[RMDB]
RNA sequence: GGGAACGACUCGAGUAGAGUCGAAAAUACUCCAGAGGCUGAGGCAGGAGGAUUGCUUGAACCUGGGAGGUGGAGGUCGCAGUGAGCUGAAAUGGCACCACAGCACUCCAGCCUGGGCAACAAAGUGUGUCAACACAAGAUUCGUCUUGUGUUGACAAAAAGAAACAACAACAACAAC
Reactivity to DMS in 0.01 (KOAc 150mM, MgCl2 10mM, bicine 150mM(pH8.5), 24C), signal-to-noise 3, nucleotides 027 to 126: u000a090c030u020c010c050a110g000a100g010g010c040u010g020a050g010g010c020a070g000g020a060g000g010a050u000u000g010c020u000u000g010a090a080c030c010u010g000g010g010a030g000g030u000g000g010a050g010g020u010c200g010c010a040g020u000g000a190g010c010u000g000a100a080a120u010g000g020c020a110c100c010a020c030a070g020c020a110c020u010c010c010a060g040c010c010u000g010g000g000c050a020a070c140a060a060a060g020u000g010
Reactivity to 2A3 in 0.01 (KOAc 150mM, MgCl2 10mM, bicine 150mM(pH8.5), 24C), signal-to-noise 1, nucleotides 027 to 126: u030a000c000u000c000c000a050g030a080g120g060c010u090g080a020g030g130c000a000g000g050a030g010g060a020u080u170g040c030u020u030g020a000a130c000c030u020g020g030g000a100g000g180u040g020g020a040g010g010u240c080g010c010a000g060u030g020a030g010c030u030g070a180a170a220u230g060g000c000a030c210c000a000c010a020g000c000a000c010u000c000c000a020g000c000c010u000g000g070g050c000a050a040c010a010a070a050g040u070g040